Chemical mapping of a 177-nucleotide RNA with DMS and 2A3.
DMS adducts were read by reverse transcription with MarathonRT.
The data come from the RNA Mapping Database (RMDB), library M2PK50.
The 2A3 profile rests on 3,447 reads.
Conditions: 150 mM KOAc, 10 mM MgCl2 and 150 mM bicine (pH 8.5), 24 C.
For DMS, 2,107 sequencing reads were counted.
RNA sequence: GGGAACGACUCGAGUAGAGUCGAAAAGUACCCUUGUUCGCAAGGGUACAAAGACAGACUUCACUGUCAUAAAGAAGGUAACUUCUCAGUUACAAUAAGAGAAAAGCACCUACUUCGGUAGGUGCAAUCAAAACAUCCUGUUCGCAGGAUGUUUUGAAAAAGAAACAACAACAACAAC
Reactivity to DMS in 0.01 (KOAc 150mM, MgCl2 10mM, bicine 150mM(pH8.5), 24C), signal-to-noise 3, nucleotides 027 to 126: g020u000a000c000c000c000u000u000g010u010u010c200g030c000a010a000g010g010g020u000a000c000a020a060a110g000a020c020a000g000a150c110u010u000c150a070c030u000g010u000c070a140u010a060a090a080g000a090a070g000g000u000a020a010c010u000u000c130u010c100a120g010u000u000a010c030a100a060u000a070a060g010a210g010a050a070a080a100g000c000a000c000c000u010a000c000u000u020c150g010g010u000a000g000g020u000g000c000a020a020
Reactivity to 2A3 in 0.01 (KOAc 150mM, MgCl2 10mM, bicine 150mM(pH8.5), 24C), signal-to-noise 3, nucleotides 027 to 126: g000u010a010c000c000c000u010u010g040u030u050c140g030c110a000a000g000g020g000u000a000c000a000a020a000g000a000c000a010g020a020c040u100u050c140a040c130u030g020u030c000a010u270a060a220a040g130a040a030g130g000u020a000a010c010u120u070c080u070c110a020g020u040u030a020c040a090a120u170a230a050g080a020g070a050a060a020a080g000c000a000c010c000u000a000c010u030u060c210g050g000u010a000g000g000u000g000c000a000a000